[RMDB]
RNA sequence: GGGAACGACUCGAGUAGAGUCGAAAAGUAUAAGUCUAUUUGAAAUAGCGGGUAUAAUAGCAGAAAGCUAUAACUUGCUUCAACGAGGAAGAUUACCUCUAGUUUCAGAAUUUUCUGACGAAACGAUGAAGCAAAAUAUGCUACAUGUAAUUAUACACAGUCGUGAGAAUUUCGAUUCUCACGACUGAAAAGAAACAACAACAACAAC
Reactivity to 2A3 in 0.01 (KOAc 150mM, MgCl2 10mM, bicine 150mM(pH8.5), 24C), signal-to-noise 1, nucleotides 027 to 156: g090u080a110u020a190a030g090u060c010u010a030u060u080u170g120a130a110a030u000a010g000c020g090g000g000u000a070u060a040a000u060a020g000c050a020g000a100a020a000g000c010u000a050u000a050a060c000u000u000g020c000u000u020c000a110a100c090g040a000g000g040a080a100g100a280u070u180a090c000c000u000c010u000a000g030u030u030u000c010a000g030a010a050u170u140u190u100c040u060g020a030c050g000a020a000a000c020g020a040u090g000a000a000g000c000a000a000a000a000u070a050u120g020c020u040a040c020a110u040g000u060a080a000u020u000a010u030a020c040a010